[RMDB]
RNA sequence: GGGAACGACUCGAGUAGAGUCGAAAACUGUGGGCCCGCAUCAGGCGCGUUCCAGCUUGCGAUCACGGGGAUCUCUACACGCAAGCAAGUAUAGCCAUCAGCACUUAAAGUAGGCCGCCGGGGACACUAUUAAGGACAAAUUCGUUUGUCCUUAAUAAAAAGAAACAACAACAACAAC
Reactivity to 2A3 in 0.01 (KOAc 150mM, MgCl2 10mM, bicine 150mM(pH8.5), 24C), signal-to-noise 9, nucleotides 027 to 126: c030u030g010u050g030g060g080c000c010c020g030c030a130u100c080a050g060g000c010g000c030g050u060u050c020c000a010g000c010u020u020g010c020g090a110u110c080a060c140g020g000g020g060a080u070c070u000c010u100a050c040a010c050g020c010a010a020g000c010a020a010g050u070a090u090a130g020c030c020a080u080c040a070g020c010a030c050u070u130a080a030a030g040u050a100g060g030c000c010g000c010c000g010g000g000g010a010c010a010c050
Reactivity to DMS in 0.01 (KOAc 150mM, MgCl2 10mM, bicine 150mM(pH8.5), 24C), signal-to-noise 9, nucleotides 027 to 126: c040u000g010u010g010g010g010c010c010c030g010c130a100u030c150a090g000g010c010g010c040g000u000u000c030c020a140g010c010u000u000g010c020g000a090u020c140a130c170g000g000g010g010a100u020c060u010c030u010a130c160a100c030g010c020a010a030g010c010a050a090g010u020a040u020a100g010c020c020a100u010c070a090g000c040a070c090u010u020a070a100a120g010u010a120g010g010c020c020g020c020c010g010g000g000g000a100c050a040c080
This 177-nucleotide RNA was probed chemically with 2A3 and DMS. It was measured as part of the RMDB libraries RFM100 and RFMREP. Values cover nucleotides 27 to 126. The RNA was probed in 150 mM KOAc, 10 mM MgCl2 and 150 mM bicine (pH 8.5) at 24 C. 2A3 is a SHAPE reagent: it acylates the 2'-hydroxyl of flexible nucleotides of all four kinds.